[RMDB]
RNA sequence: GGGAACGACUCGAGUAGAGUCGAAAAGUUGUAAGGUUCGCCUUACAACAAAAUAAAACAGGCUAGUACCGGCCUGAAAAAGGUACGAAGAUCGAAAGAUGAAAAGACACUUGUUCGCAAGUGUCAACCAAUAGUAGCCGUUCGCGGCUACUAUUGGAAAAGAAACAACAACAACAAC
Reactivity to 2A3 in 0.01 (KOAc 150mM, MgCl2 10mM, bicine 150mM(pH8.5), 24C), signal-to-noise 1, nucleotides 027 to 126: g000u000u000g000u000a020a000g040g010u020u060c150g100c000c010u000u020a000c000a010a000c000a010a020a010a000u110a010a070a020a040c110a010g000g000c000u030a020g000u000a010c010c020g010g000c010c000u020g020a010a000a000a000a000g000g020u000a000c000g020a120a020g030a060u150c060g040a110a000a100g020a020u170g090a050a060a010a110g000a000c020a000c000u000u000g020u060u090c240g020c100a000a000g000u020g000u000c000a000a010
Reactivity to DMS in 0.01 (KOAc 150mM, MgCl2 10mM, bicine 150mM(pH8.5), 24C), signal-to-noise 1, nucleotides 027 to 126: g010u000u000g000u010a000a010g030g000u000u020c210g060c000c000u050u000a000c040a000a000c020a000a100a080a050u030a090a080a110a110c160a040g020g030c030u010a200g000u000a000c010c010g000g000c000c040u000g000a010a010a020a150a080g000g000u010a010c000g030a040a190g010a050u000c000g000a060a130a080g010a000u000g050a080a190a080a080g000a000c000a000c000u000u000g010u000u020c150g010c020a000a010g000u010g000u000c010a060a080
The record gives the reactivity of an RNA of 177 nucleotides to 2A3 and DMS. The RNA was probed in 150 mM KOAc, 10 mM MgCl2 and 150 mM bicine (pH 8.5) at 24 C. For DMS, 673 sequencing reads were counted. DMS adducts were read by reverse transcription with MarathonRT.